[RMDB]
RNA sequence: GGGAACGACUCGAGUAGAGUCGAAAAUUACCCACGGGAACUGCUGGGUUCCCCUGAUGUCCAGUCCCUCCCCGCUCCUGGAGAAGGGAGACUCGGGAACGCCUAGCAUCUGAGGGACAAAGCCGCCAACGUCCGGGCUUCGGCCCGGACAAAAGAAACAACAACAACAAC
Reactivity to 2A3 in 0.01 (KOAc 150mM, MgCl2 10mM, bicine 150mM(pH8.5), 24C), signal-to-noise 2, nucleotides 027 to 129: u080u070a200c000c000c000a010c020g000g000g000a100a020c020u060g060c000u050g090g040g000u040u080c010c000c000c000u030g040a060u100g020u020c060c100a060g000u020c030c000c000u040c020c000c000c000g040c000u070c000c010u020g060g070a190g000a100a070g040g120g030a000g000a030c070u000c060g000g000g000a040a040c030g000c000c000u010a030g000c000a030u060c010u050g020a010g000g000g000a010c000a010a120a000g010c000c000g030c000c000a070a000c040
Reactivity to DMS in 0.01 (KOAc 150mM, MgCl2 10mM, bicine 150mM(pH8.5), 24C), signal-to-noise 3, nucleotides 027 to 129: u020u010a240c000c000c130a140c250g000g000g100a120a070c080u000g040c030u000g000g000g000u010u010c130c030c070c000u080g000a070u030g040u100c000c150a020g030u000c020c000c070u020c000c000c000c100g020c110u050c030c040u020g090g000a180g030a300a180g020g020g020a060g090a070c000u060c070g020g010g030a030a020c080g010c150c030u000a060g000c050a020u040c010u010g030a070g240g000g050a080c030a110a000a140g000c090c000g050c030c020a070a080c110